Conditions: 150 mM KOAc, 10 mM MgCl2 and 150 mM bicine (pH 8.5), 24 C. Chemical mapping of a 177-nucleotide RNA with 2A3 and DMS. The 2A3 profile rests on 1,346 reads.

RNA sequence: GGGAACGACUCGAGUAGAGUCGAAAAGUUGAUAGUAAACUUGAGGAUAUGACUAGUAAGUUAAUUAGUGAAGAAAAAGAAAACAUAGAUAUUGUUUCUACUGUUGACAUGAUACAAGGCUUAUUGAAUUAUAUGACGCUUUCGAGCGUCAUAUAAUAAAAGAAACAACAACAACAAC
Reactivity to 2A3 in 0.01 (KOAc 150mM, MgCl2 10mM, bicine 150mM(pH8.5), 24C), signal-to-noise 4, nucleotides 027 to 126: g010u020u020g080a150u170a120g060u120a020a090a090c020u020u080g110a060g070g000a110u060a040u260g080a090c030u030a020g100u090a190a000g040u020u120a080a100u130u240a110g050u020g160a210a080g040a100a100a030a030a000g120a010a100a020a000c020a060u100a030g100a080u140a100u190u150g030u000u050u030c010u040a030c070u020g060u080u000g010a010c010a070u110g010a000u030a060c070a000a100g060g020c050u070u050a020u090u090g020a000
Reactivity to DMS in 0.01 (KOAc 150mM, MgCl2 10mM, bicine 150mM(pH8.5), 24C), signal-to-noise 5, nucleotides 027 to 126: g000u000u010g000a100u050a100g000u000a030a040a060c020u010u000g000a120g000g000a120u020a030u020g000a050c030u000a050g000u020a060a100g010u010u010a040a060u000u020a050g010u010g010a110a140g010a060a070a070a070a100g000a090a050a030a030c030a040u010a050g000a060u000a070u030u030g000u010u000u000c000u000a030c100u000g010u000u000g000a130c040a070u000g030a130u020a030c040a020a070g000g000c070u000u010a060u010u000g010a070
It was measured as part of the RMDB library OK1LIB. Values cover nucleotides 27 to 126.